[RMDB]
RNA sequence: GGGAACGACUCGAGUAGAGUCGAAAACUCUUCUUUCCCUUCUCUCGUCUUCCUCGGUCAACCUCUUAAGUUCCUCUUCUUCUUCCUUGCUGAGGUUCUUCCCUCCCCCGGCUAGCUGCUUCUUCUUACACACAUGGGUUCGCCCAUGUGAAAAGAAACAACAACAACAAC
Reactivity to DMS in 0.01 (KOAc 150mM, MgCl2 10mM, bicine 150mM(pH8.5), 24C), signal-to-noise 8, nucleotides 027 to 129: c040u030c040u050u000c050u030u030u030c030c010c020u010u000c040u000c020u020c060g000u020c000u010u010c030c040u000c050g010g010u010c100a070a080c030c000u040c070u010u010a070a110g000u010u000c030c020u020c050u010u000c040u000u000c040u000u000c050c030u000u010g010c000u010g000a070g000g010u000u000c040u000u000c000c000c000u000c000c000c000c000c000g010g040c060u020a040g000c000u010g000c060u000u000c030u020u020c040u000u000a110c150a250
Reactivity to 2A3 in 0.01 (KOAc 150mM, MgCl2 10mM, bicine 150mM(pH8.5), 24C), signal-to-noise 9, nucleotides 027 to 129: c000u020c040u110u040c020u020u040u030c010c010c010u070u020c060u000c000u010c020g060u010c030u110u030c020c000u020c020g000g020u040c020a040a050c020c000u050c010u080u090a080a030g020u040u040c000c010u020c000u030u010c000u030u010c000u020u030c030c000u020u050g020c030u020g030a040g040g000u040u030c000u020u020c000c000c000u020c000c000c000c000c000g000g000c020u040a030g010c030u050g020c000u050u020c000u030u010c000u040u100a080c100a000
Structure probing data (DMS and 2A3) for a 170-nucleotide construct. Values are in units of 0.01, from 0 to 300, in steps of 10. The data come from the RNA Mapping Database (RMDB), library 15KLIB. DMS adducts were read by reverse transcription with MarathonRT. The reactions ran in a buffer of 150 mM KOAc, 10 mM MgCl2 and 150 mM bicine (pH 8.5), at 24 C.